This 177-nucleotide RNA was probed chemically with DMS and 2A3.
The data come from the RNA Mapping Database (RMDB), library RFMREP.
2A3 adducts were read by reverse transcription with SuperScript II with manganese.
For DMS the reverse transcriptase was MarathonRT.
The RNA was probed in 150 mM KOAc, 10 mM MgCl2 and 150 mM bicine (pH 8.5) at 24 C.

[RMDB]
RNA sequence: GGGAACGACUCGAGUAGAGUCGAAAAUGCCCGGUCUUUGCCCCGGAUCAACUUUAAUAGUUAUGACGGUUUCCGACUCGGGAAAAUAGAUUCUUGCAUAACGACGGAAAUUUCAGAGUUUGUUCUGCCUUACUGAAAAGUUCGCUUUUCAGUAAGGAAAAGAAACAACAACAACAAC
Reactivity to DMS in 0.01 (KOAc 150mM, MgCl2 10mM, bicine 150mM(pH8.5), 24C), signal-to-noise 2, nucleotides 027 to 126: u000g020c020c110c170g020g000u000c020u000u000u000g000c300c040c050c050g030g000a090u010c070a040a030c020u000u000u040a100a070u020a050g000u010u000a090u010g010a150c120g010g000u000u000u000c040c020g010a060c060u020c000g000g000g010a070a100a060a050u010a060g000a080u000u010c040u000u010g030c030a040u010a050a300c040g000a060c020g010g010a100a060a060u010u010u010c020a160g000a050g010u000u000u010g000u000u000c000u010g000
Reactivity to 2A3 in 0.01 (KOAc 150mM, MgCl2 10mM, bicine 150mM(pH8.5), 24C), signal-to-noise 2, nucleotides 027 to 126: u010g000c050c090c000g010g010u040c000u040u040u130g040c000c020c040c010g010g000a020u030c020a000a020c000u100u150u260a170a040u220a130g060u050u130a080u120g110a040c030g030g000u030u050u070c040c040g000a030c030u040c070g010g010g000a050a070a000a000u130a020g030a050u150u030c000u010u100g030c030a060u030a100a020c020g060a030c010g100g070a030a120a080u120u180u060c060a060g000a040g090u010u110u260g010u000u120c000u010g030